[RMDB]
An RNA of 177 nucleotides, treated with DMS and 2A3 and read out base by base. For 2A3 the reverse transcriptase was SuperScript II with manganese. The 2A3 profile rests on 4,327 reads. For DMS, 1,587 sequencing reads were counted.
RNA sequence: GGGAACGACUCGAGUAGAGUCGAAAAUCAGAAUAGUUCGCUAUUCUGAAAACGGGCAAAACGCAGACUGCCCGAAUGACGGCCAAACCGUCCAAGCGAAAAAAAGUCUGGGCUUCGGCCCAGACAACCAUCACCUAUGAUUCGUCAUAGGUGAUGGAAAAGAAACAACAACAACAAC
Reactivity to DMS in 0.01 (KOAc 150mM, MgCl2 10mM, bicine 150mM(pH8.5), 24C), signal-to-noise 2, nucleotides 027 to 126: u000c010a010g000a000a050u000a040g020u000u000c100g030c000u000a090u000u000c000u000g000a000a060a080a150c050g010g010g010c000a030a070a080a110c110g010c140a120g000a120c140u000g000c000c000c010g000a040a050u000g000a020c040g020g010c060c140a060a050a300c000c010g000u000c000c280a050a040g000c030g010a010a000a040a100a060a140a130g010u000c000u000g010g010g010c000u000u030c170g000g010c000c000c000a010g000a000c000a030a030
Reactivity to 2A3 in 0.01 (KOAc 150mM, MgCl2 10mM, bicine 150mM(pH8.5), 24C), signal-to-noise 2, nucleotides 027 to 126: u030c000a000g000a040a000u010a010g040u020u020c080g000c050u000a010u010u010c000u000g000a030a010a000a010c020g010g000g030c020a050a070a080a040c090g040c070a040g060a160c060u020g000c000c000c000g010a010a010u110g010a000c000g010g000c060c120a090a070a090c020c000g000u000c030c040a130a040g040c030g060a000a100a000a000a020a040a030g000u000c000u000g000g010g010c020u030u090c300g100g020c020c000c000a010g000a000c000a000a000
Source: RMDB library M2PK50, as collected in RNAgym.